Annotation:
This 170-nucleotide RNA was probed chemically with 2A3 and DMS. 2A3 adducts were read by reverse transcription with SuperScript II with manganese.
RNA sequence: GGGAACGACUCGAGUAGAGUCGAAAACCAAGGAUGGAAUAACCAAACUGGCUGAUGUUGAAGCGGACGUCGCAGCACGUGCUGAUGACGAAGGCUUCAUCACAUUAAAGAACAAUCUAUAUAGAUUAUACCUGUCGCUUCGGCGACAGGAAAAGAAACAACAACAACAAC
Reactivity to 2A3 in 0.01 (KOAc 150mM, MgCl2 10mM, bicine 150mM(pH8.5), 24C), signal-to-noise 3, nucleotides 027 to 129: c000c010a010a060g030g030a000u020g000g060a120a080u090a150a120c010c000a020a040a060c060u040g070g000c010u060g030a130u050g000u010u020g010a050a000g000c000g040g140a030c000g000u000c020g010c010a020g000c020a000c290g090u300g000c030u000g000a190u040g000a000c010g000a050a000g040g030c000u020u000c000a000u000c010a010c000a010u070u170a060a040a010g050a090a020c020a040a060u010c000u000a120u010a120u110a200g010a020u100u020a060u090a060
Reactivity to DMS in 0.01 (KOAc 150mM, MgCl2 10mM, bicine 150mM(pH8.5), 24C), signal-to-noise 3, nucleotides 027 to 129: c000c080a110a010g000g000a010u120g060g000a100a090u100a090a080c050c030a030a110a220c060u010g030g020c150u040g010a100u000g000u000u080g020a050a000g000c030g010g030a300c000g010u000c060g010c000a100g070c070a190c300g070u080g050c050u030g000a050u000g040a050c000g000a020a300g080g020c040u090u000c000a030u040c050a060c030a050u000u200a020a080a050g040a000a040c140a010a080u070c100u070a060u150a080u050a110g000a000u000u000a000u030a000
Reactivities are given for positions 27 through 129. The reactions ran in a buffer of 150 mM KOAc, 10 mM MgCl2 and 150 mM bicine (pH 8.5), at 24 C.